[RMDB]
RNA sequence: GGGAACGACUCGAGUAGAGUCGAAAAGAUAUGGACGAUGAUAAGCAACAGCCUGACGUGUCGGAAACGACAUACAGGACAUGCUUAACAUCGUCCUAAGUCAAAACGCAGUUGUUCGCAACUGCGAUCCCUGGUAGGAGUUCGCUCCUACCAGGGAAAAAGAAACAACAACAACAAC
Reactivity to DMS in 0.01 (KOAc 150mM, MgCl2 10mM, bicine 150mM(pH8.5), 24C), signal-to-noise 2, nucleotides 027 to 126: g020a000u000a130u030g000g010a010c000g000a020u000g000a150u000a000a000g030c010a130a110c270a140g000c000c000u010g000a080c300g000u000g000u000c000g030g000a010a010a050c010g010a000c000a000u000a050c000a020g020g020a010c060a300u020g020c000u000u000a010a120c000a000u000c000g000u010c000c000u000a000a050g000u000c010a050a070a050a250c050g000c000a030g000u000u010g010u000u010c150g030c000a010a000c000u000g000c010g020a010
Reactivity to 2A3 in 0.01 (KOAc 150mM, MgCl2 10mM, bicine 150mM(pH8.5), 24C), signal-to-noise 2, nucleotides 027 to 126: g010a000u020a020u080g010g000a000c020g000a000u020g000a000u000a010a030g000c110a110a160c070a230g010c000c000u070g070a170c300g000u000g000u020c000g000g000a020a000a000c000g000a000c010a000u040a040c000a000g040g020a020c070a190u300g000c000u000u010a010a010c000a000u020c010g000u000c010c000u010a010a000g000u000c000a000a000a090a080c010g020c010a000g000u010u010g030u110u150c280g040c180a010a000c010u000g000c010g010a010
Description
This 177-nucleotide RNA was probed chemically with DMS and 2A3. The data come from the RNA Mapping Database (RMDB), library TTRDES. For DMS, 1,440 sequencing reads were counted.